[RMDB]
RNA sequence: GGGAACGACUCGAGUAGAGUCGAAAAAGUUUUGGAAGAUCAAUAUUACUCGCCUUUUACUCUUCUUUCGUUUUGAAGGAAAUAUGAGUGAAAUCAGAAGGACAAUCGUCGUUUUGAUGAUAUACCUACCUGAGAAUAUCUUCGGAUAUUCUCAGGUAAAAGAAACAACAACAACAAC
Reactivity to DMS in 0.01 (KOAc 150mM, MgCl2 10mM, bicine 150mM(pH8.5), 24C), signal-to-noise 1, nucleotides 027 to 126: a070g010u010u020u000u000g020g000a170a120g010a070u030c080a030a080u000a060u010u010a110c080u000c050g030c070c020u010u000u000u010a010c010u000c020u010u000c000u020u010u000c010g010u000u010u010u010g010a010a020g000g000a020a080a180u010a040u010g020a040g000u000g010a030a050a060u010c060a080g020a080a000g020g000a010c090a130a040u010c130g030u000c010g010u000u000u000u010g010a020u000g000a040u020a040u000a060c040c040u000
Reactivity to 2A3 in 0.01 (KOAc 150mM, MgCl2 10mM, bicine 150mM(pH8.5), 24C), signal-to-noise 2, nucleotides 027 to 126: a000g050u090u060u020u110g090g010a140a040g050a160u150c010a110a050u060a080u150u090a040c040u020c020g110c020c010u050u050u030u030a040c000u000c040u080u000c010u000u040u030c030g090u170u090u140u300g000a000a020g050g080a000a090a000u210a100u140g010a000g000u030g010a040a020a010u090c020a020g100a020a010g040g010a000c050a120a230u130c120g010u020c100g000u000u110u050u020g010a030u010g000a010u020a010u030a150c000c010u000

Source: RMDB library RFMREP, as collected in RNAgym. Chemical mapping of a 177-nucleotide RNA with DMS and 2A3. For 2A3 the reverse transcriptase was SuperScript II with manganese. For DMS, 1,053 sequencing reads were counted.